[RMDB]
RNA sequence: GGGAACGACUCGAGUAGAGUCGAAAAGCGUACUACUUGGACAUGAUAAGUGCUAAGACAGUUGCUUCCCAAAUAGGAAGCAACAAUGACGGCACUUUAUCAACAGCCAAGUAUCGCAAAACCCGCUUGUUUCUUGUUCGCAAGAAACAAGCGGGAAGUACUAGGGACACUUCGGUGUCCCUAGUACAAAAGAAACAACAACAACAAC
Reactivity to 2A3 in 0.01 (KOAc 150mM, MgCl2 10mM, bicine 150mM(pH8.5), 24C), signal-to-noise 1, nucleotides 027 to 156: g020c000g030u090a040c020u010a000c000u030u000g000g040a090c020a300u030g050a010u030a060a000g000u000g010c020u070a120a060g050a130c080a070g010u010u000g000c020u000u010c000c020c010a190a260a010u260a060g010g000a000a000g040c000a020a000c050a020a090u110g000a050c050g000g010c000a010c000u020u040u000a010u010c010a010a060c020a010g080c020c000a000a000g020u030a030u120c010g000c000a000a000a000a110c000c000c000g000c000u000u010g000u000u000u000c000u070u000g030u020u040c280g000c060a000a000g000a010a030a000c000a000a010g000c000g000g000g000a040a000